This 177-nucleotide RNA was probed chemically with 2A3 and DMS. For DMS the reverse transcriptase was MarathonRT. In probing experiments dimethyl sulfate is read out at A N1 and C N3, which are open when not base-paired. It was measured as part of the RMDB library TTRDES.
RNA sequence: GGGAACGACUCGAGUAGAGUCGAAAAAAAAAGAUAUGGAAAGCAAGUCUCCUUGGAUUUAUAGGGAUAACAUUCGGAAACGAAUGCUAAUACCUAUUGUCAGGAGUCACCUUUCCUAAGUCAAAAACAAACUAUAAGAGUUCGCUCUUAUAGUUUGAAAAGAAACAACAACAACAAC
Reactivity to 2A3 in 0.01 (KOAc 150mM, MgCl2 10mM, bicine 150mM(pH8.5), 24C), signal-to-noise 1, nucleotides 027 to 126: a060a000a060a000a000g110a050u160a050u120g000g020a030a000a000g050c130a100a300g010u010c020u050c010c010u070u130g140g010a030u090u300u050a010u040a000g000g030g000a010u010a090a000c010a000u010u010c010g000g050a060a090a050c020g000a000a000u000g000c010u030a060a010u090a300c000c030u000a000u000u010g040u000c010a000g000g010a010g000u020c040a040c010c000u040u040u000c030c000u000a150a020g040u050c040a240a010a000a000a000
Reactivity to DMS in 0.01 (KOAc 150mM, MgCl2 10mM, bicine 150mM(pH8.5), 24C), signal-to-noise 2, nucleotides 027 to 126: a030a060a050a050a080g000a050u000a300u000g000g010a020a010a020g020c110a110a180g000u000c000u010c010c000u020u010g050g000a030u010u000u010a000u000a000g000g010g010a070u000a060a090c000a010u000u000c000g010g000a120a110a130c000g010a000a000u000g000c020u000a130a070u030a160c000c000u010a010u000u000g000u000c010a040g000g000a010g000u000c020a140c300c000u000u000u010c000c000u000a040a140g020u000c040a050a110a100a070a150